RNA sequence: GGGAACGACUCGAGUAGAGUCGAAAAGAUAUGGAGAAUCUCCGAGAGGCAAUGACGACAUAUCUCACGCUCGGAAACGAGCGUGAGAUAUGUUAAGACAGCCUGUUAGGAGAGUUCUCCUAAGUCAGAUAACUGAGUAGUUCGCUACUCAGUUAUCAAAAGAAACAACAACAACAAC
Reactivity to DMS in 0.01 (KOAc 150mM, MgCl2 10mM, bicine 150mM(pH8.5), 24C), signal-to-noise 2, nucleotides 027 to 126: g020a100u000a300u010g000g000a020g020a090a090u000c010u010c000c000g000a290g000a010g010g010c000a150a090u010g020a150c300g000a010c000a010u010a010u010c000u020c000a000c000g030c050u000c000g000g010a100a060a180c000g020a020g000c010g030u000g030a000g000a000u000a000u000g000u000u000a090a130g000a290c220a170g010c010c000u000g010u000u000a180g000g010a010g010a040g030u000u000c010u000c000c000u000a030a060g000u000c030a130

Source: RMDB library TTRINS, as collected in RNAgym. This 177-nucleotide RNA was probed chemically with DMS. For DMS the reverse transcriptase was MarathonRT. The reactions ran in a buffer of 150 mM KOAc, 10 mM MgCl2 and 150 mM bicine (pH 8.5), at 24 C.